[RMDB]
RNA sequence: GGGAACGACUCGAGUAGAGUCGAAAAGAGAGGAGAGAGUGGAGGGAGAUCAUGCCCUGUGAUGUGUCUUUUGCAGGUGAAGGUGGGAGACAAGGUCUCUGCUGACGAUGAGGCAGAGCCACCGUGAGCCCCAAUAUCCAUUCGUGGAUAUUGGGGCAAAAGAAACAACAACAACAAC
Reactivity to DMS in 0.01 (KOAc 150mM, MgCl2 10mM, bicine 150mM(pH8.5), 24C), signal-to-noise 2, nucleotides 027 to 126: g010a160g000a130g100g010a080g020a030g020a050g000u010g000g010a160g000g010g000a090g020a080u010c070a040u000g000c030c030c000u000g000u010g010a070u020g020u010g000u000c020u030u000u000u000g030c000a070g010g010u000g010a130a090g010g020u000g020g000g020a140g000a160c090a110a020g040g000u000c000u010c010u030g010c020u010g000a290c180g010a070u000g020a270g000g000c000a030g000a010g000c050c030a080c080c060g000u010g000a190
Reactivity to 2A3 in 0.01 (KOAc 150mM, MgCl2 10mM, bicine 150mM(pH8.5), 24C), signal-to-noise 2, nucleotides 027 to 126: g050a000g010a030g030g000a030g000a000g000a020g090u140g030g080a230g070g010g000a040g080a050u080c040a100u150g090c000c030c000u000g030u020g010a050u070g120u010g110u100c090u020u050u010u070g010c010a030g020g020u030g100a100a040g130g060u210g020g000g010a130g030a010c090a090a150g060g000u060c030u000c000u000g010c000u030g010a120c160g250a200u160g040a040g030g070c000a000g010a020g000c000c000a020c030c020g040u040g100a000
Structure probing data (DMS and 2A3) for a 177-nucleotide construct. 2A3 adducts were read by reverse transcription with SuperScript II with manganese. The RNA was probed in 150 mM KOAc, 10 mM MgCl2 and 150 mM bicine (pH 8.5) at 24 C. For DMS the reverse transcriptase was MarathonRT. Reactivities are given for positions 27 through 126.